[RMDB]
RNA sequence: GGGAACGACUCGAGUAGAGUCGAAAAAAAAGAUAUGGAGAGAUUAGAGCUGAUGACCAUACUCAUUAAGUAUAUCGGAAACGAUAUACUGAACUGUAUGCAAGGCUCUAUCUCUCCUAAGUCAAAAGAUAUCUCUUAAGUUCGCUUAAGAGAUAUCAAAAGAAACAACAACAACAAC
Reactivity to 2A3 in 0.01 (KOAc 150mM, MgCl2 10mM, bicine 150mM(pH8.5), 24C), signal-to-noise 3, nucleotides 027 to 126: a000a000a010a070g010a010u030a010u040g020g000a000g000a010g000a030u150u300a300g010a040g060c000u030g030a300u040g020a180c010c010a010u020a000c030u060c090a120u100u160a000a000g000u000a010u000a000u000c000g000g000a010a010a010c000g000a000u000a000u000a000c010u010g000a010a010c030u010g010u010a000u000g010c010a020a100g000g000c000u000c000u010a000u010c000u000c000u010c000c000u000a000a000g000u010c000a000a000a000a100
Reactivity to DMS in 0.01 (KOAc 150mM, MgCl2 10mM, bicine 150mM(pH8.5), 24C), signal-to-noise 6, nucleotides 027 to 126: a070a050a110a120g000a020u000a050u010g000g000a030g010a030g000a010u000u010a000g010a020g030c000u000g000a020u010g000a100c300c000a010u000a000c000u000c020a030u010u000a160a140g000u000a010u000a000u000c000g020g000a010a000a010c010g010a010u000a000u000a000c000u000g000a060a300c130u010g000u000a000u000g000c010a020a010g010g000c000u000c000u000a020u000c000u000c000u000c000c000u000a000a010g000u000c000a080a060a140a140